[RMDB]
The record gives the reactivity of an RNA of 177 nucleotides to DMS. High DMS reactivity at an A or C suggests that its Watson-Crick edge is free. For DMS, 1,922 sequencing reads were counted. Conditions: 150 mM KOAc, 10 mM MgCl2 and 150 mM bicine (pH 8.5), 24 C.
RNA sequence: GGGAACGACUCGAGUAGAGUCGAAAAGAUGACUGUACCCUUAAUGGAGUUGGUAAUUUUAGAGCAUCUGAUAAUGACAGAGUUAUAGAUCCAGGUAAAGUGGAAACGUUAACAAUCCGGAGGCUGCCAUUGCGCCUCAAUUCGUUGAGGCGCAAUGAAAAGAAACAACAACAACAAC
Reactivity to DMS in 0.01 (KOAc 150mM, MgCl2 10mM, bicine 150mM(pH8.5), 24C), signal-to-noise 2, nucleotides 027 to 126: g000a110u000g020a100c040u010g010u010a110c020c010c010u010u010a120a130u000g010g000a140g000u000u000g000g010u030a020a050u020u010u000u000a120g030a140g010c000a030u000c040u010g010a080u010a110a060u010g010a110c040a030g000a090g010u000u010a050u000a110g010a090u000c030c020a010g000g020u000a010a060a070g000u000g020g000a040a050a080c160g010u010u010a030a080c100a090a060u010c040c020g000g010a100g020g020c060u020g030c100